[RMDB]
RNA sequence: GGGAACGACUCGAGUAGAGUCGAAAAUGAAGCCCGCACUUGCACCGAUCAGUGCCAGGCCGGGCGUGGACCAGGCCGCAAUGAUCGGCAUACGAUAGCGGAUGCUGAGCCAUGCGGAAGCGGCGGACAUCGAUGGCCUAUUCGUAGGCCAUCGAUGAAAAGAAACAACAACAACAAC
Reactivity to 2A3 in 0.01 (KOAc 150mM, MgCl2 10mM, bicine 150mM(pH8.5), 24C), signal-to-noise 1, nucleotides 027 to 126: u140g040a030a030g050c060c020c000g000c040a000c010u010u020g000c060a030c060c040g090a080u080c040a020g020u000g070c000c100a060g020g000c020c000g000g010g000c100g010u240g090g060a240c130c040a050g050g040c000c020g010c000a040a100u040g020a020u040c000g050g000c010a030u140a050c060g100a080u170a100g080c080g060g000a070u200g040c000u010g000a000g000c030c000a040u150g020c050g080g040a090a020g000c010g030g020c030g000g000a010
Reactivity to DMS in 0.01 (KOAc 150mM, MgCl2 10mM, bicine 150mM(pH8.5), 24C), signal-to-noise 2, nucleotides 027 to 126: u010g000a160a170g010c150c010c000g010c080a160c110u000u030g010c080a110c040c020g010a100u020c080a060g000u000g000c060c090a190g000g000c120c000g000g000g000c050g010u000g000g000a160c010c020a070g020g020c000c000g000c000a050a040u000g000a120u000c000g000g030c050a050u000a070c070g010a140u010a170g010c010g030g000a050u000g010c030u020g000a110g000c080c020a080u020g050c020g000g010a110a120g000c000g010g000c050g030g000a170